[RMDB]
RNA sequence: GGGAACGACUCGAGUAGAGUCGAAAACCAAGUUGCGUAGUGGACCGCCUGGGGCUUAUGCGAAAGCUGGGUCUCACGGUCCAUAAUGUGGCAGGCACAGCGUGAGGCUGGCUUCACAGAGCAGCGACCUGUCGGGGAGAUUCGUCUCCCCGACAGGAAAAGAAACAACAACAACAAC
Reactivity to 2A3 in 0.01 (KOAc 150mM, MgCl2 10mM, bicine 150mM(pH8.5), 24C), signal-to-noise 2, nucleotides 027 to 126: c010c000a040a000g000u000u000g000c010g050u160a040g020u050g010g000a000c000c000g110c070c040u020g000g000g000g000c000u080u010a150u300g000c020g030a060a060a000g000c000u040g000g000g000u000c000u020c000a000c010g000g010u000c010c000a000u000a000a020u020g020u000g080g020c130a100g030g030c030a010c000a300g040c050g090u270g140a070g300g000c000u000g000g000c000u030u010c010a000c000a020g030a000g040c000a000g020c000g000a040